[RMDB]
RNA sequence: GGGAACGACUCGAGUAGAGUCGAAAAGCGCCACCCAGCCUCGUGGCGGUCCAGGCCUGGUCGCCAUACGCCCGCCCACCAAUCCGCUUCUAACCACCCCGGCCGCAUAACCUCUUAGGGCGUUCCAGUCUAAAAGGUGCUUCGGCACCUUUUAGACAAAAGAAACAACAACAACAAC
Reactivity to DMS in 0.01 (KOAc 150mM, MgCl2 10mM, bicine 150mM(pH8.5), 24C), signal-to-noise 1, nucleotides 027 to 126: g000c040g010c010c020a070c040c050c000a080g000c020c000u000c070g050u040g010g100c000g020g050u000c030c040a080g010g020c110c050u000g010g010u000c090g000c030c020a010u000a030c120g030c000c010c060g000c010c000c020a020c070c010a150a060u000c040c010g000c020u000u000c060u000a200a040c030c050a090c060c040c040c090g000g000c060c000g000c020a010u000a110a050c050c000u040c000u000u000a110g010g000g000c000g000u020u000c010c050a100
Reactivity to 2A3 in 0.01 (KOAc 150mM, MgCl2 10mM, bicine 150mM(pH8.5), 24C), signal-to-noise 2, nucleotides 027 to 126: g050c040g010c010c000a040c000c030c000a030g040c000c000u060c070g030u040g040g020c020g020g000u050c020c010a050g030g090c010c030u080g030g000u040c010g000c020c000a040u040a040c030g020c010c010c010g000c000c000c000a040c000c000a010a060u040c010c020g000c000u050u030c020u070a040a070c000c000a020c000c020c020c000g000g000c010c000g010c000a000u060a090a030c010c010u000c020u030u070a050g000g000g010c000g000u030u000c000c000a020
An RNA of 177 nucleotides, treated with DMS and 2A3 and read out base by base. For 2A3, 2,313 sequencing reads were counted. The DMS profile rests on 1,833 reads. The RNA was probed in 150 mM KOAc, 10 mM MgCl2 and 150 mM bicine (pH 8.5) at 24 C. For 2A3 the reverse transcriptase was SuperScript II with manganese.